RNA sequence: GGGAACGACUCGAGUAGAGUCGAAAAGCACGGGAACACUGUAGAGGGUUUCCUACUUACUUGCGAGUCCACCUUCUGUGGACAAGCUAGCCUCUUCAUUACACAGUCUUCGGAUAAUGCACGUGUGCAGCCCCUACGUAUUCGUACGUAGGGGCUGAAAAGAAACAACAACAACAAC
Reactivity to DMS in 0.01 (KOAc 150mM, MgCl2 10mM, bicine 150mM(pH8.5), 24C), signal-to-noise 3, nucleotides 027 to 126: g050c090a090c100g040g000g010a000a020c090a060c080u030g020u080a030g010a090g000g010g000u000u010u000c010c000u000a140c050u000u030a100c040u000u030g000c010g040a300g000u010c000c040a000c000c300u010u080c250u080g000u000g030g000a020c010a030a100g010c010u000a030g000c000c010u000c030u020u010c090a120u010u010a080c070a110c080a100g000u020c030u000u000c070g010g000a050u010a060a060u040g010c060a080c020g020u010g000u020g010
Reactivity to 2A3 in 0.01 (KOAc 150mM, MgCl2 10mM, bicine 150mM(pH8.5), 24C), signal-to-noise 8, nucleotides 027 to 126: g040c030a020c080g010g020g070a110a020c070a020c120u060g040u110a050g040a060g060g040g010u010u040u030c030c010u010a060c020u060u070a020c020u020u050g000c000g010a010g010u020c010c000a010c010c050u300u200c140u300g000u000g000g000a000c010a000a000g010c010u020a000g010c000c000u030c000u060u080c020a070u050u220a060c060a010c010a070g030u030c030u050u040c050g070g010a050u050a190a070u150g030c040a020c130g030u040g010u040g030